The record gives the reactivity of an RNA of 177 nucleotides to 2A3 and DMS. Source: RMDB library TTRDES, as collected in RNAgym. For 2A3 the reverse transcriptase was SuperScript II with manganese. 2A3 is a SHAPE reagent: it acylates the 2'-hydroxyl of flexible nucleotides of all four kinds. Values cover nucleotides 27 to 126.
[RMDB]
RNA sequence: GGGAACGACUCGAGUAGAGUCGAAAAGAUAUGGAUGCUCCUCCUAGCAAUGACGACUUGUCGGAAACGACAAGUUAAGACAGCUGGGAGGAGGCAUCCUAAGUCAAAACGGAGCUUCGGCUCCGAACUAUGGAUACCAGUUCGCUGGUAUCCAUAGAAAAGAAACAACAACAACAAC
Reactivity to 2A3 in 0.01 (KOAc 150mM, MgCl2 10mM, bicine 150mM(pH8.5), 24C), signal-to-noise 3, nucleotides 027 to 126: g030a020u110a060u220g030g000a000u020g010c000u010c010c000u000c000c000u010a010g000c090a280a300u200g060a070c120g000a000c010u000u000g010u000c010g040g000a120a110a030c010g000a000c010a020a000g010u000u000a030a000g080a030c030a050g090c020u000g010g000g010a000g000g010a010g000g020c010a000u000c000c000u010a070a020g060u040c040a000a000a120a150c000g020g000a000g000c010u130u110c300g230g000c000u000c020c010g000a020a000
Reactivity to DMS in 0.01 (KOAc 150mM, MgCl2 10mM, bicine 150mM(pH8.5), 24C), signal-to-noise 3, nucleotides 027 to 126: g000a060u010a300u000g000g010a000u010g030c000u000c000c000u000c000c010u000a010g040c000a130a180u000g020a260c300g010a010c010u000u010g000u010c000g000g000a160a150a190c000g020a000c000a000a010g010u000u000a050a160g000a180c230a110g000c000u010g020g020g010a010g020g010a000g010g020c010a000u010c000c000u000a000a070g000u010c050a080a050a130a220c030g020g000a030g020c010u000u010c240g050g000c010u000c000c000g010a020a060